[RMDB]
RNA sequence: GGGAACGACUCGAGUAGAGUCGAAAAACUUGCAAACCCCAGGCCUACACGGCAAGCUGCUGGAAAUAUUCAACACCCUGAAGAAAAAUGAUUUGGCACAAACAUAUGAUGCUGUAGAAUGGGAAGACAGCGGCAUGUUGUUCGCAACAUGCCGCUGAAAAGAAACAACAACAACAAC
Reactivity to 2A3 in 0.01 (KOAc 150mM, MgCl2 10mM, bicine 150mM(pH8.5), 24C), signal-to-noise 1, nucleotides 027 to 126: a000c070u070u110g000c000a210a200a300c000c000c000c000a020g020g000c000c000u140a000c040a000c000g000g000c000a030a050g060c040u000g000c110u100g000g110a180a280a000u160a050u080u280c020a050a040c090a000c000c000c040u010g000a010a010g060a110a270a100a130a170u120g000a110u070u040u000g000g010c000a000c040a110a270a000c000a070u000a040u120g210a210u000g000c110u000g000u000a000g000a300a000u120g010g000g010a000a080g000a000